Structure probing data (2A3 and DMS) for a 177-nucleotide construct. Conditions: 150 mM KOAc, 10 mM MgCl2 and 150 mM bicine (pH 8.5), 24 C. For DMS, 1,837 sequencing reads were counted. It was measured as part of the RMDB library TTRDEL. 2A3 adducts were read by reverse transcription with SuperScript II with manganese.
RNA sequence: GGGAACGACUCGAGUAGAGUCGAAAAGAUAUGGACGAUGUGCGACGAAGUGACGUAACAUCUGAUCGGAAACGAUCAGUGGUCACAGAGCAUAAGUCCUAAGUCAAAAGUCGCGUUCGCGCGACAAGGAAAUGCUACAGUUCGCUGUAGCAUUUCCAAAAGAAACAACAACAACAAC
Reactivity to 2A3 in 0.01 (KOAc 150mM, MgCl2 10mM, bicine 150mM(pH8.5), 24C), signal-to-noise 2, nucleotides 027 to 126: g030a000u080a020u150g020g000a030c020g060a230u300g030u020g020c070g060a210c060g100a300a050g000u000g010a000c020g030u070a070a030c040a300u110c010u010g000a000u010c000g020g010a090a000a020c010g010a000u010c010a010g000u010g020g000u000c000a000c000a020g020a000g000c000a000u010a080a000g000u000c010c000u020a120a010g050u010c040a040a070a000a120g000u010c010g000c010g010u050u090c160g040c020g000c000g140a000c010a000a020
Reactivity to DMS in 0.01 (KOAc 150mM, MgCl2 10mM, bicine 150mM(pH8.5), 24C), signal-to-noise 3, nucleotides 027 to 126: g000a030u000a300u000g000g000a050c020g000a170u000g010u000g000c000g030a150c200g000a130a090g000u000g000a000c000g000u000a040a120c220a000u000c000u000g000a000u000c000g030g000a090a080a170c000g010a020u000c000a000g010u010g000g000u000c010a010c000a050g020a180g000c010a010u000a110a210g000u000c000c000u010a060a100g010u000c000a030a090a070a100g000u000c010g020c010g030u000u000c230g020c000g010c010g010a000c020a060a050